[RMDB]
RNA sequence: GGGAACGACUCGAGUAGAGUCGAAAACUCUUGUUAGGUGAAAGUUGAUGGUCGCCGUGUCAGUCCAUGCCUUUGAAAACAGUUCUUUGUAGUAGGGAGUCGAGAACCUAUGAGAGUUAGAACUUGCUAUGCCUUGGACUCUUCGGAGUCCAAGGAAGUGAUGCUAAUAGUUCGCUAUUAGCAUCACAAAAGAAACAACAACAACAAC
Reactivity to DMS in 0.01 (KOAc 150mM, MgCl2 10mM, bicine 150mM(pH8.5), 24C), signal-to-noise 4, nucleotides 027 to 156: c020u000c020u000u000g010u000u000a090g020g020u010g010a050a080a120g020u000u000g020a100u010g010g030u000c020g030c030c050g020u000g010u000c030a100g030u000c040c020a080u000g020c020c020u000u000u000g000a110a110a070a060c060a060g010u000u000c010u000u000u010g030u000a240g020u000a060g010g020g010a100g020u010c100g000a170g030a100a080c010c010u000a040u000g000a180g000a100g020u000u000a050g010a040a060c060u000u000g030c020u000a120u010g010c000c000u000u010g000g000a040c000u000c000u010u000c300g040g010a040g010u000c000c000a000a010g020g000a010a020
Reactivity to 2A3 in 0.01 (KOAc 150mM, MgCl2 10mM, bicine 150mM(pH8.5), 24C), signal-to-noise 5, nucleotides 027 to 156: c010u020c020u010u090g100u090u120a080g000g020u030g070a110a080a060g020u060u060g070a070u050g040g030u040c020g020c030c010g030u020g040u010c040a020g020u030c010c020a040u090g030c020c030u120u060u130g110a070a070a030a020c050a050g030u060u030c030u060u110u120g040u070a050g010u000a010g020g020g030a020g030u030c020g020a030g030a150a040c010c010u020a050u070g040a070g010a010g050u040u040a030g010a020a030c020u040u090g040c030u080a050u210g040c010c000u000u000g000g000a010c000u000c000u010u040c080g090g010a000g010u000c000c000a000a000g000g000a010a000
Structure probing data (DMS and 2A3) for a 207-nucleotide construct.
The DMS profile rests on 11,693 reads.
Conditions: 150 mM KOAc, 10 mM MgCl2 and 150 mM bicine (pH 8.5), 24 C.